[RMDB]
RNA sequence: GGGAACGACUCGAGUAGAGUCGAAAAGAUAUGGACUACCCGAUAAGCUCGUAUCGGAAACGAUACAGAGCUUUUGACGGUGUAGUCCUAAGUCAAACCACGCGUGCACUUCGGUGCACGCGUGGAAUCAUACAACAUUGUUCGCAAUGUUGUAUGAAAAAGAAACAACAACAACAAC
Reactivity to DMS in 0.01 (KOAc 150mM, MgCl2 10mM, bicine 150mM(pH8.5), 24C), signal-to-noise 3, nucleotides 027 to 126: g000a020u000a110u010g000g000a000c010u000a010c000c010c000g020a070u010a020a010g020c000u000c000g000u000a000u000c000g010g000a020a030a060c000g000a000u000a000c000a070g020a000g020c000u000u000u000u010g000a300c040g010g000u010g010u000a000g010u000c000c000u010a010a060g000u000c010a110a120a240c000c010a020c020g060c000g080u030g050c020a010c010u010u000c160g030g030u010g010c040a010c090g020c030g060u000g000g010a010a020
Reactivity to 2A3 in 0.01 (KOAc 150mM, MgCl2 10mM, bicine 150mM(pH8.5), 24C), signal-to-noise 3, nucleotides 027 to 126: g000a010u020a010u070g000g000a000c010u000a000c000c020c010g010a170u180a300a010g000c020u000c000g000u000a010u000c000g000g010a020a020a010c040g000a000u010a010c130a070g000a000g000c000u010u030u030u040g010a000c000g000g000u150g000u110a000g000u020c000c000u000a000a000g000u010c020a070a040a120c010c000a000c020g030c020g090u000g110c040a010c040u080u110c300g120g000u010g040c020a000c030g010c000g010u000g010g010a010a020